[RMDB]
RNA sequence: GGGAACGACUCGAGUAGAGUCGAAAAAGAUAUGGAGCAUAGACAUGCACGAAACAUGGCGACGAAGUUCGCUCGGAAACGAGCGAACAGAGCCAUGUAGUAGUGCAACAGCUAUGCUCCUAAGUCACGCUUCAAUAACGUUCGCGUUAUUGAAGCGAAAAGAAACAACAACAACAAC
Reactivity to 2A3 in 0.01 (KOAc 150mM, MgCl2 10mM, bicine 150mM(pH8.5), 24C), signal-to-noise 1, nucleotides 027 to 126: a010g030a040u080a040u190g000g000a000g000c000a000u030a000g040a160c030a040u050g040c000a000c010g020a010a030a000c000a000u010g020g000c020g070a300c070g040a300a030g010u000u010c000g010c000u020c010g000g020a070a080a050c040g000a000g000c000g030a000a000c000a000g010a000g000c000c010a000u000g000u000a000g000u000a010g000u020g000c010a000a000c000a000g000c000u010a000u010g010c000u000c000c010u000a010a000g020u010c000a020
Reactivity to DMS in 0.01 (KOAc 150mM, MgCl2 10mM, bicine 150mM(pH8.5), 24C), signal-to-noise 2, nucleotides 027 to 126: a080g010a040u020a300u020g000g000a000g060c000a010u000a000g010a100c140a220u000g010c000a010c000g030a240a290a140c000a000u010g000g030c010g000a250c280g040a130a090g000u000u000c000g050c020u010c000g000g000a050a110a180c000g000a010g030c000g000a000a000c040a040g000a210g000c000c000a000u000g010u000a040g000u010a110g000u000g000c000a000a060c300a100g010c000u000a010u000g010c000u000c000c000u000a040a060g000u000c060a230
The record gives the reactivity of an RNA of 177 nucleotides to 2A3 and DMS. The RNA was probed in 150 mM KOAc, 10 mM MgCl2 and 150 mM bicine (pH 8.5) at 24 C. Source: RMDB library TTRDES, as collected in RNAgym. 2A3 adducts were read by reverse transcription with SuperScript II with manganese. DMS adducts were read by reverse transcription with MarathonRT.